RNA sequence: GGGAACGACUCGAGUAGAGUCGAAAAACGGGCUAGUGUCGCAAGACCGGUAGCAAUACCGACAGAGGUCAUAUACGUCAGUUAAGCCUUGGCGGCGUCGCGACGUCCGGGUCGAAAACUUAGCGAAUCGCCGUAGUGCAGCGUGUUCGUCCGCGUCGUCUUUUCUUCUGUUCGCAGAAGAAAAGACAAAAGAAACAACAACAACAAC
Reactivity to DMS in 0.01 (KOAc 150mM, MgCl2 10mM, bicine 150mM(pH8.5), 24C), signal-to-noise 2, nucleotides 027 to 156: a090c070g030g000g030c020u000a090g060u000g000u000c010g000c090a110a160g030a070c000c020g030g040u000a070g050c190a190a100u000a040c010c030g000a080c040a160g000a120g030g010u000c010a080u000a190u000a130c070g000u000c090a170g040u000u000a170a170g000c030c010u000u000g010g010c010g020g000c000g000u000c060g040c100g010a040c050g020u000c030c050g000g030g000u000c010g000a060a060a060a080c060u030u010a190g040c010g010a060a110u010c010g030c060c000g020u000a070g030u000g020c050a140g020c020g040u000g000u000u000c080g020u000c010c070g000c040g050u000c050
Reactivity to 2A3 in 0.01 (KOAc 150mM, MgCl2 10mM, bicine 150mM(pH8.5), 24C), signal-to-noise 4, nucleotides 027 to 156: a000c010g020g010g000c030u040a050g040u020g020u110c010g010c050a080a080g040a040c000c000g030g000u010a010g020c040a030a100u010a040c000c010g040a030c040a040g140a060g040g030u050c050a010u080a010u030a180c060g010u030c070a120g010u040u150a060a020g010c000c000u020u020g050g000c020g010g010c000g020u030c020g000c020g010a040c010g010u000c010c020g020g000g010u070c050g020a030a010a070a120c070u140u100a050g010c010g040a040a050u080c040g000c000c000g010u040a040g010u020g080c060a020g000c010g020u060g030u020u020c010g040u050c030c020g050c050g050u080c060
This 207-nucleotide RNA was probed chemically with DMS and 2A3.
For DMS the reverse transcriptase was MarathonRT.
For DMS, 2,599 sequencing reads were counted.
Values cover nucleotides 27 to 156.
Conditions: 150 mM KOAc, 10 mM MgCl2 and 150 mM bicine (pH 8.5), 24 C.